[RMDB]
RNA sequence: GGGAACGACUCGAGUAGAGUCGAAAAGGCACACCGGGCGACGCUGGUCGCGAUCUCGGUCGCUACCCGUGCAUGGGCCGCGGUGCAAUGGGCAUUGAACGCGGCGCUGUUCGCGAACCCGAUCGUCAACAGGACGAUGGUUCGCCAUCGUCCUGUUAAAAGAAACAACAACAACAAC
Reactivity to DMS in 0.01 (KOAc 150mM, MgCl2 10mM, bicine 150mM(pH8.5), 24C), signal-to-noise 9, nucleotides 027 to 126: g000g020c060a110c100a100c050c020g000g010g000c030g010a080c060g010c060u010g010g000u000c090g010c020g010a040u000c020u010c240g010g010u000c050g020c010u000a060c020c010c090g010u000g010c100a070u010g010g010g010c010c010g010c020g010g010u010g010c040a060a050u010g020g010g020c130a140u000u000g010a070a080c030g010c010g010g010c010g010c050u000g010u000u000c050g010c040g010a130a100c030c010c020g010a110u010c100g010u010c090
Reactivity to 2A3 in 0.01 (KOAc 150mM, MgCl2 10mM, bicine 150mM(pH8.5), 24C), signal-to-noise 6, nucleotides 027 to 126: g060g020c050a020c010a020c090c020g020g030g010c010g030a040c020g020c070u090g030g020u030c020g000c000g020a030u010c030u040c110g120g000u010c000g010c010u020a030c000c010c010g000u000g020c040a140u110g010g130g000c020c010g040c020g050g000u130g000c000a010a080u120g050g100g010c110a070u030u100g050a080a010c030g000c000g010g000c100g050c180u080g050u110u030c020g000c010g050a050a060c010c000c020g040a160u080c050g060u040c030